[RMDB]
Chemical mapping of a 177-nucleotide RNA with DMS and 2A3.
2A3 adducts were read by reverse transcription with SuperScript II with manganese.
RNA sequence: GGGAACGACUCGAGUAGAGUCGAAAAGGUCGGCCCGGUGUUGCGGCCCUGAUUGAACGCGGCCACGUAGGCGUUCACCUUGUCGAUGGCGUCCUUGCUGGUGGCCGCCAGCGCGUCACACGAGGUGGGCUAGCAGUAGUUUCGACUACUGCUAGCCAAAAGAAACAACAACAACAAC
Reactivity to DMS in 0.01 (KOAc 150mM, MgCl2 10mM, bicine 150mM(pH8.5), 24C), signal-to-noise 2, nucleotides 027 to 126: g020g000u000c040g020g040c060c010c050g040g000u000g010u000u000g020c080g030g020c050c060c030u000g010a100u020u010g000a110a090c020g060c030g010g010c010c040a020c100g010u010a110g010g000c020g010u000u010c010a010c020c000u000u000g010u000c170g040a130u000g020g000c000g010u010c230c150u010u000g030c030u000g030g030u000g010g020c060c140g010c020c010a000g000c060g010c050g000u000c010a060c040a050c050g000a020g030g000u000g010
Reactivity to 2A3 in 0.01 (KOAc 150mM, MgCl2 10mM, bicine 150mM(pH8.5), 24C), signal-to-noise 2, nucleotides 027 to 126: g020g010u070c030g040g020c020c040c050g060g080u170g020u020u080g010c020g030g000c030c010c040u160g090a170u180u130g050a070a050c070g000c010g040g000c030c020a010c030g060u060a040g010g060c020g020u090u080c010a010c000c000u040u040g070u090c110g210a300u020g010g030c000g000u120c000c100u070u140g040c040u070g040g020u020g000g080c040c000g000c000c000a010g000c010g000c010g010u020c010a000c010a030c020g020a030g040g020u130g010
Values cover nucleotides 27 to 126. DMS adducts were read by reverse transcription with MarathonRT.